[RMDB]
Chemical mapping of a 177-nucleotide RNA with 2A3 and DMS.
The DMS profile rests on 6,525 reads.
Reactivities are rounded to 0.1 and cut off at 0 and 3.
DMS adducts were read by reverse transcription with MarathonRT.
The RNA was probed in 150 mM KOAc, 10 mM MgCl2 and 150 mM bicine (pH 8.5) at 24 C.

RNA sequence: GGGAACGACUCGAGUAGAGUCGAAAACACACUCCCUUCGGGGAGUGUGAAAGAACGCGUGGGACACGCAAGGAGGAGCGUGUGGGACGCGACAUACCCAAAAAAGUGGAUAGUUCGCUAUCCACAAGUUCGUAUAAAACUUCGGUUUUAUACGAACAAAAGAAACAACAACAACAAC
Reactivity to 2A3 in 0.01 (KOAc 150mM, MgCl2 10mM, bicine 150mM(pH8.5), 24C), signal-to-noise 5, nucleotides 027 to 126: c000a000c000a000c000u010c000c010c030u010u050c220g040g000g000g000a000g000u000g000u000g000a000a010a000g060a190a030c010g010c010g000u030g010g300g010a000c010a000c010g010c050a040a050g180g070a100g060g050a160g040c010g000u010g000u000g010g170g000a000c010g010c010g030a000c010a020u140a060c010c000c000a040a120a040a030a010a010g000u000g000g000a000u000a010g020u040u070c250g000c130u010a000u010c000c000a000c000a000a000
Reactivity to DMS in 0.01 (KOAc 150mM, MgCl2 10mM, bicine 150mM(pH8.5), 24C), signal-to-noise 5, nucleotides 027 to 126: c020a000c010a000c000u000c000c000c000u000u020c200g050g010g000g000a000g010u000g010u000g000a020a060a090g010a110a110c010g000c010g020u010g040g020g000a040c000a010c010g000c010a080a090g030g000a300g000g010a170g000c000g010u000g000u000g010g020g000a030c010g010c010g000a060c070a080u000a110c000c000c000a010a070a060a090a090a120g010u000g000g000a020u000a010g010u000u010c250g000c010u000a010u000c000c010a000c000a020a070